[RMDB]
RNA sequence: GGGAACGACUCGAGUAGAGUCGAAAAGUGAAGGGGCGCAAAAUAGCCGAUGUUGACUUACAAGAACGAAAGUUGCUAAUUGAAACUGAAGCAAGACGUACAGUCAUUAUUUUUCCUUAAAUGUGCUAUUUGUAUGCAAUGAGUUCAUACGAAACGCGUCUAGGACAAAAUUCGUUUUGUCCUAGACAAAAGAAACAACAACAACAAC
Reactivity to 2A3 in 0.01 (KOAc 150mM, MgCl2 10mM, bicine 150mM(pH8.5), 24C), signal-to-noise 5, nucleotides 027 to 156: g080u050g060a030a040g030g000g020g010c020g020c070a050a050a040a120u090a050g000c000c030g010a050u060g070u040u030g030a030c000u020u030a020c050a120a100g040a150a020c050g050a120a070a040g050u030u020g030c020u060a110a130u100u090g100a120a060a040c070u050g030a030a000g000c010a020a040g070a050c050g010u040a030c040a030g020u010c010a010u000u160a080u040u110u010u040u050c020c000u040u090a050a110a120u130g030u030g030c010u010a060u090u040u040g000u010a020u030g010c070a060a120u150g010a060g090u050u100c010a000u010a050c010g060a030a090a060c050g010c000
Reactivity to DMS in 0.01 (KOAc 150mM, MgCl2 10mM, bicine 150mM(pH8.5), 24C), signal-to-noise 4, nucleotides 027 to 156: g040u000g000a090a080g000g040g020g000c040g010c080a050a060a080a120u000a090g020c000c040g000a160u000g020u000u000g010a100c060u000u010a120c060a060a160g020a100a130c070g000a090a100a160g020u000u000g010c010u010a090a120u000u000g010a130a060a090c040u000g000a130a140g030c050a090a120g000a120c050g010u000a090c080a070g020u020c030a050u010u000a130u010u010u000u000u000c030c050u000u010a010a060a100u000g020u000g040c060u000a210u000u000u020g010u010a050u010g020c120a050a090u010g010a160g020u000u020c030a060u000a080c020g010a020a040a060c050g010c180

About this RNA: An RNA of 207 nucleotides, treated with 2A3 and DMS and read out base by base. The reactions ran in a buffer of 150 mM KOAc, 10 mM MgCl2 and 150 mM bicine (pH 8.5), at 24 C. The DMS profile rests on 7,690 reads.